Background
Chemical mapping of a 177-nucleotide RNA with 2A3 and DMS. The reactions ran in a buffer of 150 mM KOAc, 10 mM MgCl2 and 150 mM bicine (pH 8.5), at 24 C. The DMS profile rests on 1,360 reads. The data come from the RNA Mapping Database (RMDB), library TTRDEL.

[RMDB]
RNA sequence: GGGAACGACUCGAGUAGAGUCGAAAAGAUAUGGAUCAUUGUGGGAGAUCACUCGGAAACGAGAGAUCGAAGAACACGCUGAUCCUAAGUCAAAAGCACCACUUCUCGUUCGCGAGAAGUGGUGCAACCUACUCAUGGUCUUCGGACCAUGAGUAGGAAAAGAAACAACAACAACAAC
Reactivity to 2A3 in 0.01 (KOAc 150mM, MgCl2 10mM, bicine 150mM(pH8.5), 24C), signal-to-noise 1, nucleotides 027 to 126: g020a020u040a020u160g000g000a000u020c010a020u000u080g000u010g020g010g000a060g010a000u010c000a030c060u000c010g000g050a050a050a040c000g010a000g000a020g000a010u010c000g000a300a010g010a030a000c000a000c020g000c020u010g000a000u000c020c010u010a170a030g060u030c020a010a000a070a180g000c010a000c010c010a010c010u040u000c000u000c000g080u100u090c290g040c030g190a010g000a000a010g000u000g010g010u000g000c000a000a000
Reactivity to DMS in 0.01 (KOAc 150mM, MgCl2 10mM, bicine 150mM(pH8.5), 24C), signal-to-noise 2, nucleotides 027 to 126: g000a060u000a300u000g000g000a000u000c000a030u000u000g040u000g000g030g000a200g000a030u000c000a060c000u000c000g030g000a090a150a110c010g050a000g000a010g010a010u010c000g000a080a110g010a180a090c000a010c000g050c160u000g000a000u020c020c000u000a010a070g000u000c040a090a090a080a150g000c000a000c000c000a000c000u000u000c000u000c000g010u000u020c260g000c020g020a000g010a000a000g020u000g000g000u000g020c000a000a000